[RMDB]
RNA sequence: GGGAACGACUCGAGUAGAGUCGAAAAGAUUACGUGUCGUUGUGGAAUCGAUACUACGCACGAGAUUCCAAGGUCUCUGUAGUACGUCCGCUGGUGACGUCUUUAGAGUCACGUUCGAUAUACGAAAGGUAUCUUCUACCUUCGGGUAGAAGAUACCAAAAGAAACAACAACAACAAC
Reactivity to 2A3 in 0.01 (KOAc 150mM, MgCl2 10mM, bicine 150mM(pH8.5), 24C), signal-to-noise 3, nucleotides 027 to 126: g120a020u190u190a040c050g020u050g100u140c060g010u060u060g020u000g060g040a080a140u070c050g010a030u000a050c000u010a000c020g040c020a010c050g000a010g000a060u080u090c090c000a130a070g120g010u000c000u000c000u040g000u010a010g000u030a010c030g010u000c000c010g060c140u090g070g070u110g020a000c000g090u030c020u000u060u070a000g000a010g000u030c000a020c130g000u030u100c030g010a030u010a010u010a270c040g090a120a080a050
Reactivity to DMS in 0.01 (KOAc 150mM, MgCl2 10mM, bicine 150mM(pH8.5), 24C), signal-to-noise 2, nucleotides 027 to 126: g000a070u020u030a100c050g000u000g010u010c020g000u010u000g000u010g000g020a090a090u030c000g000a120u000a030c000u000a010c040g010c140a060c130g020a270g000a020u000u000c120c230a060a030g060g010u000c000u010c020u010g000u000a020g020u000a000c010g000u000c000c010g040c060u030g000g000u000g000a010c010g030u010c050u000u000u070a060g010a090g000u000c000a060c090g000u040u010c010g010a100u010a100u020a050c050g000a090a070a070